Chemical mapping of a 177-nucleotide RNA with DMS and 2A3. 2A3 adducts were read by reverse transcription with SuperScript II with manganese. The RNA was probed in 150 mM KOAc, 10 mM MgCl2 and 150 mM bicine (pH 8.5) at 24 C. The 2A3 profile rests on 873 reads. Reactivities are given for positions 27 through 126.
[RMDB]
RNA sequence: GGGAACGACUCGAGUAGAGUCGAAAAGACGCCUGUGUGGCGAAGCGAGCAUGAGAUGGAGCCGCAAGAGAAGAUGAGAUAGAAGCGGCUAGAUAGGUUGCUCGCUAAAAGAUCCAUCUCACAGAGAAGUCCAUACUACCUUCGGGUAGUAUGGACUAAAAGAAACAACAACAACAAC
Reactivity to DMS in 0.01 (KOAc 150mM, MgCl2 10mM, bicine 150mM(pH8.5), 24C), signal-to-noise 2, nucleotides 027 to 126: g000a160c050g010c000c010u010g000u000g020u080g000g010c060g040a200a060g000c010g010a030g020c030a010u000g000a160g000a000u030g000g000a020g040c030c000g000c000a090a120g000a170g000a110a130g080a120u010g000a130g000a130u040a100g020a200a300g020c010g000g010c000u020a000g010a100u030a100g020g000u000u030g000c000u010c020g030c010u030a000a000a080a040g000a160u020c000c040a060u000c010u030c000a100c240a140g010a050g000a030
Reactivity to 2A3 in 0.01 (KOAc 150mM, MgCl2 10mM, bicine 150mM(pH8.5), 24C), signal-to-noise 2, nucleotides 027 to 126: g090a000c030g000c000c000u290g180u160g190u190g150g020c000g000a050a000g000c000g000a000g000c050a040u130g020a030g010a060u020g060g030a050g020c000c000g000c020a040a000g060a020g020a290a030g120a100u270g050a080g000a100u240a020g030a100a000g010c000g000g000c020u000a020g000a080u060a020g000g040u070u160g000c000u020c000g000c000u020a000a000a000a040g000a050u000c000c000a000u000c030u000c000a020c040a010g160a000g010a170